[RMDB]
RNA sequence: GGGAACGACUCGAGUAGAGUCGAAAACUAUUUAUAGACAGAGUGGAAAUUACUGAAUAUCAAAAUCAACCUCGGGCACGUAUUGAUCCGGUGGUACGAUUCCAAUUGGGCGAGGCAUAAGCAGAAAGGAUAGUUGAGUAUUCGUGUUCAGCUAUCCAAAAGAAACAACAACAACAAC
Reactivity to 2A3 in 0.01 (KOAc 150mM, MgCl2 10mM, bicine 150mM(pH8.5), 24C), signal-to-noise 2, nucleotides 027 to 126: c010u020a030u110u120u060a200u080a020g020a020c030a020g040a020g050u080g040g080a090a060a100u130u070a170c030u050g070a040a080u130a020u090c040a020a070a090a070u040c010a020a040c020c000u000c010g000g000g010c000a030c090g010u090a090u120u180g000a030u000c000c000g000g000u060g000g000u010a060c040g010a030u110u000c030c010a070a050u040u080g030g000g020c000g010a010g000g020c020a010u050a240a090g020c030a020g090a110a120a000
Reactivity to DMS in 0.01 (KOAc 150mM, MgCl2 10mM, bicine 150mM(pH8.5), 24C), signal-to-noise 1, nucleotides 027 to 126: c000u000a010u030u000u010a050u030a040g010a100c000a020g000a070g010u020g000g000a100a070a070u010u010a060c070u010g020a030a020u030a030u030c120a080a100a080a050u010c060a070a060c010c000u010c040g000g000g020c050a250c300g000u000a210u130u020g000a300u000c110c000g000g000u000g000g000u000a170c300g000a010u010u020c040c030a020a110u000u010g020g000g020c020g020a020g000g000c070a020u010a000a020g020c100a040g010a030a060a060